Conditions: 150 mM KOAc, 10 mM MgCl2 and 150 mM bicine (pH 8.5), 24 C. This 177-nucleotide RNA was probed chemically with DMS and 2A3. It was measured as part of the RMDB library OK1LIB. 2A3 adducts were read by reverse transcription with SuperScript II with manganese.
RNA sequence: GGGAACGACUCGAGUAGAGUCGAAAAGAGGACGCAGAGGCUGUAUCCGGUCUGCAAACACGACAGGGCUGGAAUGUCACCUGGAGUGGGACUACUGGCUGUCUCCGGAGUAGGACGUCCGAAGAGAGGGAUCCAGCUCGUUCGCGAGUUGGAUCCCAAAAGAAACAACAACAACAAC
Reactivity to DMS in 0.01 (KOAc 150mM, MgCl2 10mM, bicine 150mM(pH8.5), 24C), signal-to-noise 2, nucleotides 027 to 126: g050a220g010g000a020c000g000c010a230g010a150g000g000c080u000g000u040a140u000c040c020g050g000u000c110u000g000c240a210a140a250c020a010c120g000a150c010a020g000g020g000c070u020g020g000a050a100u020g000u040c070a110c020c000u030g020g000a140g000u000g010g060g000a030c030u010a090c050u010g000g000c020u000g010u000c010u000c040c050g000g010a180g040u000a170g000g010a120c050g030u010c000c010g000a170a080g000a180g030a280
Reactivity to 2A3 in 0.01 (KOAc 150mM, MgCl2 10mM, bicine 150mM(pH8.5), 24C), signal-to-noise 2, nucleotides 027 to 126: g110a010g000g000a000c020g040c020a010g000a010g060g000c010u000g000u090a220u030c000c000g000g040u040c040u090g050c010a050a090a010c040a000c030g030a060c000a000g020g010g080c000u110g110g300a040a160u220g040u060c120a140c130c010u010g060g010a020g050u020g000g080g000a010c000u030a010c000u000g030g010c000u010g000u010c000u000c060c040g120g080a010g010u180a040g010g140a030c010g000u000c000c000g020a030a040g060a010g000a030
The 2A3 profile rests on 714 reads.